This 207-nucleotide RNA was probed chemically with 2A3.
It was measured as part of the RMDB library M2RFPK.
High 2A3 reactivity points to a flexible backbone, as in loops and unpaired stretches.
RNA sequence: GGGAACGACUCGAGUAGAGUCGAAAAGUUCAUCCCCUGAUCAAGGAUGCCCGAAACGGUGAGGCGGAAAGCAAAUUAAAUAACGUCAACCCAUCGGGACGGUUGGCCAGUUAAGAAGUGAGGCUUCAAAAGAUCGAACCGUUCGCGGUUCGAUCAAGCUGUUAAUUCACUUCGGUGAAUUAACAGCAAAAGAAACAACAACAACAAC
Reactivity to 2A3 in 0.01 (KOAc 150mM, MgCl2 10mM, bicine 150mM(pH8.5), 24C), signal-to-noise 2, nucleotides 027 to 156: g110u080u050c030a040u030c010c000c010c030u020g030a060u070c000a030a040g020g010a060u120g040c000c000c000g050a070a070a020c070g000g030u050g020a080g040g000c030g030g060a160a050a000g130c090a000a050a140u190u180a080a120a150u170a050a020c010g000u020c010a000a000c000c000c000a000u030c040g000g020g000a020c020g050g040u040u020g030g070c030c050a070g000u060u110a170a040g030a050a020g050u100g050a050g060g110c010u030u020c050a070a110a010a060g000a000u000c000g000a000a000c000c000g000u060u050c190g020c020g060g000u020u000c000g000a000u020c000a000a020